The record gives the reactivity of an RNA of 207 nucleotides to 2A3 and DMS. Conditions: 150 mM KOAc, 10 mM MgCl2 and 150 mM bicine (pH 8.5), 24 C. It was measured as part of the RMDB library PDB130.
RNA sequence: GGGAACGACUCGAGUAGAGUCGAAAACGCGAUACAGCCCAAACCGAAGCCCUCACGGGCAAUGUGGUGUCAGGGCUACCUCUCAUCAGCCGACCGUCUUCACGAAGUCUCUUGGAAUAGAGCGUGAUACAGGGUGACAACCCCGUACUGAAGACCACCGAAGAUAAAGGUUCGCCUUUAUCUUCGGAAAAGAAACAACAACAACAAC
Reactivity to 2A3 in 0.01 (KOAc 150mM, MgCl2 10mM, bicine 150mM(pH8.5), 24C), signal-to-noise 2, nucleotides 027 to 156: c030g020c030g020a030u080a120c080a010g010c000c000c000a050a040a030c050c010g020a070a020g050c000c000c010u100c050a030c060g000g000g000c100a010a090u190g010u160g010g040u040g100u140c150a110g000g000g010c010u010a010c000c020u020c010u010c020a140u020c040a040g050c010c040g060a090c040c050g020u020c000u000u020c000a000c010g020a040a020g050u040c000u000c000u010u000g010g010a010a000u020a040g010a000g000c000g020u010g000a010u010a020c020a020g000g000g020u000g040a010c010a020a030c020c000c000c000g000u010a000c020u000g020a010a000g000a030c020c000a020
Reactivity to DMS in 0.01 (KOAc 150mM, MgCl2 10mM, bicine 150mM(pH8.5), 24C), signal-to-noise 1, nucleotides 027 to 156: c060g050c050g000a140u000a110c090a120g020c010c000c000a090a090a060c030c000g040a280a300g010c000c000c010u010c300a210c300g030g040g060c020a010a000u000g150u000g000g010u010g010u000c050a110g010g010g000c040u010a010c040c020u000c030u000c010a060u000c040a090g010c010c000g000a060c040c040g010u000c000u010u000c060a210c020g010a120a070g010u000c000u010c000u000u010g000g030a220a080u000a020g000a020g090c060g010u000g000a120u000a030c000a030g000g030g010u000g010a140c270a130a170c010c000c000c010g000u020a020c020u000g000a030a040g030a070c010c060a300